[RMDB]
The record gives the reactivity of an RNA of 177 nucleotides to 2A3.

RNA sequence: GGGAACGACUCGAGUAGAGUCGAAAAGAAAGCAACAUACACACCACGCAUGUGUUUUGUCACCCUGCGGUCGGUGGUAGUCGGACGGCCCAAUCAGACAGCGCGGGUCAUAUCACGCGUUCGUGCAUCGCUACAGCUGCUUCGGCAGCUGUAGCGAAAAAGAAACAACAACAACAAC
Reactivity to 2A3 in 0.01 (KOAc 150mM, MgCl2 10mM, bicine 150mM(pH8.5), 24C), signal-to-noise 1, nucleotides 027 to 126: g010a000a130a010g000c000a000a250c000a190u110a060c090a040c000a000c160c000a070c020g050c000a000u000g100u000g010u130u210u300u060g300u000c000a000c000c020c000u000g000c050g000g100u130c090g010g070u020g000g050u000a070g000u050c010g000g000a070c000g020g010c130c010c000a050a060u250c290a070g180a050c000a020g100c000g000c000g000g000g000u030c000a040u110a040u300c150a160c000g050c000g000u000u000c050g010u070g180c000a000